Chemical mapping of a 207-nucleotide RNA with 2A3. The RNA was probed in 150 mM KOAc, 10 mM MgCl2 and 150 mM bicine (pH 8.5) at 24 C.
[RMDB]
RNA sequence: GGGAACGACUCGAGUAGAGUCGAAAAGCGUACUACGAGAUUGAUAGCGAUGAAGAGCUAUGAGAACGAGCCUCCCAAAUAGGAGGCUCGACAUAGCUUGUUCGCUAUUCUUUCUCGUAUCGCAAAAGGAAUGGCAAUGGUUCGCCAUUGCCAUUCCGACUGAACCGAUCUUCGGAUCGGUUCAGUCAAAAGAAACAACAACAACAAC
Reactivity to 2A3 in 0.01 (KOAc 150mM, MgCl2 10mM, bicine 150mM(pH8.5), 24C), signal-to-noise 2, nucleotides 027 to 156: g000c010g060u130a120c070u000a000c110g000a010g020a020u020u010g000a000u010a000g000c030g000a010u090g160a120a170g020a010g050c000u000a010u000g100a130g060a230a030c000g000a010g030c010c000u040c000c030c090a200a300a040u270a150g010g000a010g000g050c000u000c000g000a000c000a020u000a000g000c000u030u020g010u000u020c010g000c050u000a000u020u070c000u000u000u000c000u000c000g000u000a000u010c000g000c000a000a000a000a150g000g000a000a000u010g000g000c010a000a000u010g010g080u010u100c230g030c010c000a000u010u000g000c000c000a000u000u000c000c000